[RMDB]
Chemical mapping of a 177-nucleotide RNA with 2A3.
RNA sequence: GGGAACGACUCGAGUAGAGUCGAAAACAUGCUUGCCUGACCCAGCUGCCCUGCUGCCCUGAGCACUUGGCUGAGGGUGGCAGAAGCACUCAGCUAACCCAAAGUGACACAUGCCUGGUGGGACAUACGGCAGCCAUAUCUUCGGAUAUGGCUGCCGAAAAGAAACAACAACAACAAC
Reactivity to 2A3 in 0.01 (KOAc 150mM, MgCl2 10mM, bicine 150mM(pH8.5), 24C), signal-to-noise 1, nucleotides 027 to 126: c060a030u100g020c080u110u040g020c010c000u090g100a040c000c000c090a110g050c070u080g000c000c000c000u000g000c010u020g060c000c000c000u000g000a000g000c000a060c130u210u200g150g000c000u020g130a030g000g000g030u080g000g000c000a000g010a020a000g000c000a000c040u090c090a020g000c000u080a150a110c000c000c000a000a090a000g050u100g000a010c000a000c060a100u010g030c000c000u090g060g010u000g040g010g000a000c000a010u240a060